[RMDB]
RNA sequence: GGGAACGACUCGAGUAGAGUCGAAAAGUGCUGAUAUUUCUGACACCAUUCCUGAUGAGAAACAGAAUGGUCACAGUUUAUAUCUAGCAGACAAUUUGACUGCUGAUGAAACAAAGGCGCUUAAAGAGAACAAUGCAUAGUUCGCUAUGCAUUGUUCAAAAGAAACAACAACAACAAC
Reactivity to 2A3 in 0.01 (KOAc 150mM, MgCl2 10mM, bicine 150mM(pH8.5), 24C), signal-to-noise 4, nucleotides 027 to 126: g020u000g000c010u020g020a030u010a060u090u050u000c000u010g000a020c010a010c060c000a000u000u020c030c010u020g010a090u080g090a070g110a050a130a010c000a010g000a000a010u010g000g010u010c030a020c000a040g020u020u050u010a100u000a000u010c060u080a010g000c000a000g020a020c030a100a200u130u100u240g050a040c010u010g000c000u020g010a050u050g020a050a080a050c020a020a080a040g030g000c000g000c020u020u080a060a060a000g100a010
Reactivity to DMS in 0.01 (KOAc 150mM, MgCl2 10mM, bicine 150mM(pH8.5), 24C), signal-to-noise 4, nucleotides 027 to 126: g050u000g020c010u010g010a170u000a040u010u000u010c000u000g000a180c250a040c000c000a020u000u000c130c080u000g010a080u020g000a190g020a140a150a090c070a010g000a040a010u000g010g000u010c150a300c060a030g010u010u000u000a100u010a060u030c000u020a020g010c010a020g010a090c070a120a220u000u010u000g020a100c000u000g000c000u000g010a050u000g000a100a080a040c120a030a100a270g000g000c000g020c030u010u000a040a050a110g010a170
Chemical mapping of a 177-nucleotide RNA with 2A3 and DMS.
Reactivities are rounded to 0.1 and cut off at 0 and 3.
The DMS profile rests on 2,873 reads.
DMS adducts were read by reverse transcription with MarathonRT.